The record gives the reactivity of an RNA of 177 nucleotides to 2A3. Source: RMDB library OK1LIB, as collected in RNAgym. Conditions: 150 mM KOAc, 10 mM MgCl2 and 150 mM bicine (pH 8.5), 24 C.
[RMDB]
RNA sequence: GGGAACGACUCGAGUAGAGUCGAAAAGAACUUGCGGUGAGGUUGUGGAUUAAUGAGAAACAAUCCAUAGCUAUGAUAGCAUCGCUACUAUCAGCUUUAGCCCUACGAGUGUCAGCGGCAGAAACACCCGUCAAGUUUGGUUCGCCAAACUUGACGGAAAAGAAACAACAACAACAAC
Reactivity to 2A3 in 0.01 (KOAc 150mM, MgCl2 10mM, bicine 150mM(pH8.5), 24C), signal-to-noise 2, nucleotides 027 to 126: g020a000a080c040u020u020g000c040g000g060u010g040a060g000g030u000u000g000u000g050g020a000u010u030a060a040u230g110a090g030a220a040a010c000a000a000u000c000c000a000u010a000g020c000u010a090u260g130a050u150a080g040c030a080u070c040g060c000u010a050c000u030a060u140c040a000g010c000u080u030u060a080g000c080c000c000u050a050c060g090a030g070u060g020u040c050a020g080c050g000g000c030a000g150a000a020a010c010a060c020